[RMDB]
RNA sequence: GGGAACGACUCGAGUAGAGUCGAAAAUAACAGGAGAGUAGAUGAUUCGCGUUAAGUGUGAGUGAAUGGGAUGUCGUCACACAACGAAGCGAGAGCGCGGUGAAUCAUUGCAUCCGCUCCAAAACAAUGCUAAGCGUGAGUUCGCUCACGCUUAGCAAAAAGAAACAACAACAACAAC
Reactivity to DMS in 0.01 (KOAc 150mM, MgCl2 10mM, bicine 150mM(pH8.5), 24C), signal-to-noise 1, nucleotides 027 to 126: u000a110a120c110a170g000g000a050g010a080g020u030a110g000a060u000g030a020u000u000c020g120c040g010u000u020a020a070g040u000g000u010g000a050g070u010g030a040a000u000g030g000g030a060u000g000u000c070g020u000c010a080c040a050c050a040a050c070g020a050a120g030c020g100a130g000a090g040c000g000c090g030g040u020g000a000a040u000c110a050u000u000g000c000a010u000c030c000g020c040u000c040c060a150a100a050a060c140a030a150